RNA sequence: GGGAACGACUCGAGUAGAGUCGAAAACCACUCGGAGUAGAACAGAGAAAUCACCUCCAGAGGACCCCUUCAGCGAACAGAGGCGCUCGCACGGGAUAGGAGUAAGACCAUAGCGAUAGGGAGAGAUAUGCGUUGUCGUUCGCGACAACGAAAAGAAACAACAACAACAAC
Reactivity to DMS in 0.01 (KOAc 150mM, MgCl2 10mM, bicine 150mM(pH8.5), 24C), signal-to-noise 5, nucleotides 027 to 129: c040c030a180c060u020c070g000g000a040g040u070a110g000a050a130c160a000g020a080g030a090a110a000u000c090a150c110c010u000c060c020a110g070a050g000g030a150c160c060c020c020u060u040c060a110g040c030g000a040a050c090a120g000a100g000g050c020g030c080u010c010g000c080a130c110g000g000g000a050u030a050g040g000a080g020u070a010a020g040a050c080c040a110u030a000g000c070g020a080u040a060g030g030g010a050g020a030g030a070u040a070u000g020
Reactivity to 2A3 in 0.01 (KOAc 150mM, MgCl2 10mM, bicine 150mM(pH8.5), 24C), signal-to-noise 5, nucleotides 027 to 129: c020c000a040c020u010c020g020g000a010g010u140a070g050a190a070c170a040g090a020g040a090a110a050u080c020a050c030c000u010c020c000a020g010a020g040g040a070c000c000c000c000u080u100c070a020g020c020g060a030a030c020a070g020a050g030g000c030g010c020u020c020g040c030a070c040g020g000g000a030u100a060g030g030a030g020u090a070a030g040a020c010c020a070u090a030g050c020g020a040u070a040g020g000g000a010g010a000g010a030u080a050u230g080

Source: RMDB library 15KLIB, as collected in RNAgym. This 170-nucleotide RNA was probed chemically with DMS and 2A3. Values cover nucleotides 27 to 129. For 2A3 the reverse transcriptase was SuperScript II with manganese. For DMS the reverse transcriptase was MarathonRT.